[RMDB]
Conditions: 150 mM KOAc, 10 mM MgCl2 and 150 mM bicine (pH 8.5), 24 C. An RNA of 177 nucleotides, treated with 2A3 and DMS and read out base by base. Values cover nucleotides 27 to 126. 2A3 adducts were read by reverse transcription with SuperScript II with manganese. Reactivities are rounded to 0.1 and cut off at 0 and 3. The 2A3 profile rests on 1,064 reads.
RNA sequence: GGGAACGACUCGAGUAGAGUCGAAAACUCAGGUGGGUGAGGAUCUAUUGUUCAGCUACAUUAGAAGUGACUGCUUAAGACUCUGGUGUGUGGUGAAAUGAGGCAGAAUUUUCUCAAUGCAGUGUUAGAUACCAAAGGGGUUCGCCCCUUUGGUAUCAAAAGAAACAACAACAACAAC
Reactivity to 2A3 in 0.01 (KOAc 150mM, MgCl2 10mM, bicine 150mM(pH8.5), 24C), signal-to-noise 1, nucleotides 027 to 126: c030u040c020a000g090g030u040g020g020g030u040g040a050g050g030a030u000c010u050a070u000u100g050u040u040c040a020g040c030u050a030c010a100u060u070a000g040a140a020g020u070g080a130c000u020g000c000u050u100a030a020g030a060c010u000c030u170g090g050u070g010u000g010u070g000g030u060g030a020a110a020u090g000a010g010g050c010a000g060a100a000u080u030u020u020c030u000c010a050a050u110g010c010a020g060u040g070u210u150a040
Reactivity to DMS in 0.01 (KOAc 150mM, MgCl2 10mM, bicine 150mM(pH8.5), 24C), signal-to-noise 5, nucleotides 027 to 126: c050u000c030a110g020g040u000g000g020g020u000g010a060g010g010a090u000c060u010a080u010u010g000u000u010c080a110g020c050u010a030c030a050u010u000a060g020a060a080g010u000g010a130c070u000g000c060u000u000a070a100g010a100c060u000c050u000g000g010u000g020u000g020u000g010g020u000g000a030a070a110u010g000a080g000g020c060a050g020a080a100u010u000u000u000c020u000c070a040a100u000g010c060a060g020u010g020u000u000a100